[RMDB]
RNA sequence: GGGAACGACUCGAGUAGAGUCGAAAAGCUGAGUAUACGAGGUUAGUUCAUUCUCGUAUGCAUGAUUGGACAAAUUAAAAUCUCAAUUUGGAUGAGGGCCUCCCUCCAGCGACGGCCGAACAUACAAUUACAUGCCAACUUUCGAGUUGGCAUGUAAAAAAGAAACAACAACAACAAC
Reactivity to DMS in 0.01 (KOAc 150mM, MgCl2 10mM, bicine 150mM(pH8.5), 24C), signal-to-noise 2, nucleotides 027 to 126: g020c030u000g020a190g020u000a010u000a030c000g000a020g000g030u030u000a130g000u000u000c170a130u000u000c010u010c000g000u000a000u000g010c010a080u000g020a060u000u010g040g030a140c100a080a010a060u000u000a030a050a060a130u000c030u010c090a030a120u000u000u000g030g020a160u010g010a140g000g010g020c020c000u000c030c000c010u000c080c000a020g000c010g000a080c070g100g010c050c000g010a030a000c080a010u000a070c100a060a070